The data come from the RNA Mapping Database (RMDB), library OK3TST. The record gives the reactivity of an RNA of 207 nucleotides to 2A3. The RNA was probed in 150 mM KOAc, 10 mM MgCl2 and 150 mM bicine (pH 8.5) at 24 C. Values are in units of 0.01, from 0 to 300, in steps of 10.
RNA sequence: GGGAACGACUCGAGUAGAGUCGAAAAGUACUCUUUAUGAAAGGCAGAUUUUGUAAACGUUCGGUGUGUGCUUGAAAGCUAUGGACACAUUUACACAUACAUAGACAUAUUCACAAAUACAAAUACAGAUAUACGUGUAUAUGUGAGAAUGUGUGUACACGCACUAGGGUUUCGACCCUAGUGCGUGAAAAGAAACAACAACAACAAC
Reactivity to 2A3 in 0.01 (KOAc 150mM, MgCl2 10mM, bicine 150mM(pH8.5), 24C), signal-to-noise 1, nucleotides 027 to 156: g040u090a060c090u030c000u120u030u010a140u130g110a140a020a080g040g030c070a030g070a140u020u000u190u070g170u190a080a170a030c110g020u020u010c010g090g030u010g030u000g000u000g110c030u030u020g100a110a000a000g030c040u030a100u140g040g030a000c010a000c000a010u000u090u140a010c030a000c000a000u030a030c030a010u030a010g110a020c000a020u030a020u080u050c050a030c000a060a210a000u090a050c100a010a110a000u220a180c050a080g150a000u130a010u010a130c030g030u000g010u020a000u000a020u030g150u030g000a170g070a070a030u050g010u020g000u020g000u000a020